[RMDB]
RNA sequence: GGGAACGACUCGAGUAGAGUCGAAAAACUGACGGUACGCCGUCAGAACGGUAGAUAAGAUGGUUUGAAAACCACGCCUUCUACCAAUAUAGUAAAUAAAUAGGCGGAGCGGUCAUACGUGACCGCAAAAACAUAUUCAGCUUCGGCUGAAUAUGAACAUCUAAGACUGCUUCGGCAGUCUUAGAUGAAAAGAAACAACAACAACAAC
Reactivity to 2A3 in 0.01 (KOAc 150mM, MgCl2 10mM, bicine 150mM(pH8.5), 24C), signal-to-noise 1, nucleotides 027 to 156: a000c000u010g000a000c010g000g000u020a030c150g000c030c000g000u000c000a000g020a050a020c030g000g000u000a000g000a030u010a030a040g140a300u080g010g070u020u070u230g100a070a090a060a000c000c000a000c000g000c000c000u020u030c000u000a000c010c000a030a000u180a000u020a000g100u060a020a020a120u080a020a100a060u100a050g000g000c010g000g000a010g000c000g000g000u000c000a020u030a120c180g140u020g000a000c000c000g000c000a000a000a000a010a000c000a000u000a000u000u000c000a000g000c000u030u050c140g160g000c000u010g000a000a000u000a000u000g000a000a010
Source: RMDB library M2RFPK, as collected in RNAgym.
The record gives the reactivity of an RNA of 207 nucleotides to 2A3.
2A3 adducts were read by reverse transcription with SuperScript II with manganese.
Conditions: 150 mM KOAc, 10 mM MgCl2 and 150 mM bicine (pH 8.5), 24 C.
The 2A3 profile rests on 869 reads.